An RNA of 177 nucleotides, treated with 2A3 and DMS and read out base by base. DMS adducts were read by reverse transcription with MarathonRT. Reactivities are given for positions 27 through 126.
[RMDB]
RNA sequence: GGGAACGACUCGAGUAGAGUCGAAAAGAUUUACGGCGGGAAACGUCCCGGGUGCGCGCAGAGGUCCCGGGUGCGGCACCGACCGAAAGGCGCAGAAACGGCACCGACCGAAACCGCCGGAAAGAAACCGGUAUUACUAUUUCGAUAGUAAUACCGGAAAAGAAACAACAACAACAAC
Reactivity to 2A3 in 0.01 (KOAc 150mM, MgCl2 10mM, bicine 150mM(pH8.5), 24C), signal-to-noise 1, nucleotides 027 to 126: g070a020u140u090u070a050c020g020g000c000g010g030g080a100a100a050c000g060u020c000c000c060g050g010g000u120g000c210g000c050g070c150a090g080a050g190g030u080c010c000c050g110g020g000u000g020c000g000g060c030a020c030c010g040a000c000c030g060a080a030a000g010g020c030g000c000a020g140a130a110a020c000g000g000c010a020c180c110g100a110c000c020g010a110a040a020c000c000g050c010c050g010g000a040a060a000g060a020a120a010
Reactivity to DMS in 0.01 (KOAc 150mM, MgCl2 10mM, bicine 150mM(pH8.5), 24C), signal-to-noise 3, nucleotides 027 to 126: g000a150u010u000u000a110c010g000g010c000g000g010g010a100a120a210c120g010u000c000c040c000g010g020g030u000g020c010g000c070g010c030a110g000a230g000g010u010c040c080c050g020g000g010u010g010c030g000g020c050a110c040c040g000a090c040c030g010a060a160a130g010g000c020g020c050a080g020a070a090a220c070g000g000c280a120c100c150g000a090c030c020g000a060a120a170c010c000g010c000c000g000g000a030a010a050g000a100a150a120